[RMDB]
RNA sequence: GGGAACGACUCGAGUAGAGUCGAAAAAGGAAUUCAGGCCUGAGGCCAGGGAGGCAGGGUGCUAGGCUGCGGGCUGGGGAGCCACAGCAUGAGGCUAAGGGAGUGCCAUCUCCACCCCAGGACUGGCCAUACGCCCCCAUUUCGAUGGGGGCGUAUGAAAAGAAACAACAACAACAAC
Reactivity to 2A3 in 0.01 (KOAc 150mM, MgCl2 10mM, bicine 150mM(pH8.5), 24C), signal-to-noise 2, nucleotides 027 to 126: a000g190g000a160a060u260u130c060a010g070g060c010c000u070g020a080g080g030c030c040a040g000g020g050a060g060g000c040a030g050g060g010u090g060c020u060a090g010g080c030u040g060c080g030g050g010c030u020g060g030g020g040a010g040c000c010a020c030a050g080c010a060u170g100a060g070g010c030u040a020a080g200g010g000a050g000u010g030c000c020a150u200c030u000c000c000a070c020c000c000c000a000g000g040a000c000u010g000g050c000
Reactivity to DMS in 0.01 (KOAc 150mM, MgCl2 10mM, bicine 150mM(pH8.5), 24C), signal-to-noise 3, nucleotides 027 to 126: a080g000g010a120a100u000u010c100a070g010g000c030c010u010g000a170g000g000c070c030a100g000g010g010a080g000g020c080a070g000g000g010u000g010c080u010a130g020g000c060u000g000c100g020g000g000c050u000g010g020g020g000a180g020c010c020a040c080a090g000c100a050u000g010a130g020g010c030u000a090a120g030g010g010a060g010u000g000c050c060a070u000c010u010c020c030a220c100c000c000c100a100g000g000a030c050u000g010g020c060